[RMDB]
RNA sequence: GGGAACGACUCGAGUAGAGUCGAAAAGAUAACCUUGAGGCCUGGGCACUGGCUGGGCCCCGAGGGCUCUUCCCAAAGCGUACCCUGGUCAUCUGGAAGAGGAUCGGAGCUGGCCUGGUGGUGACAGGCUGUCCUCCAAAUUCGUUUGGAGGACAGCAAAAGAAACAACAACAACAAC
Reactivity to DMS in 0.01 (KOAc 150mM, MgCl2 10mM, bicine 150mM(pH8.5), 24C), signal-to-noise 2, nucleotides 027 to 126: g020a100u010a090a150c020c000u000u000g020a120g000g000c000c000u000g000g010g020c040a120c160u010g010g020c010u000g050g020g000c000c000c000c000g020a030g000g020g010c140u000c030u000u000c000c000c060a090a080a120g020c180g020u000a050c050c020c010u000g010g010u000c040a070u010c150u000g020g000a080a090g000a060g010g000a090u000c040g000g010a130g010c130u020g020g000c020c020u010g010g010u020g010g000u010g010a130c040a050g000

The record gives the reactivity of an RNA of 177 nucleotides to DMS.
For DMS, 1,383 sequencing reads were counted.
The reactions ran in a buffer of 150 mM KOAc, 10 mM MgCl2 and 150 mM bicine (pH 8.5), at 24 C.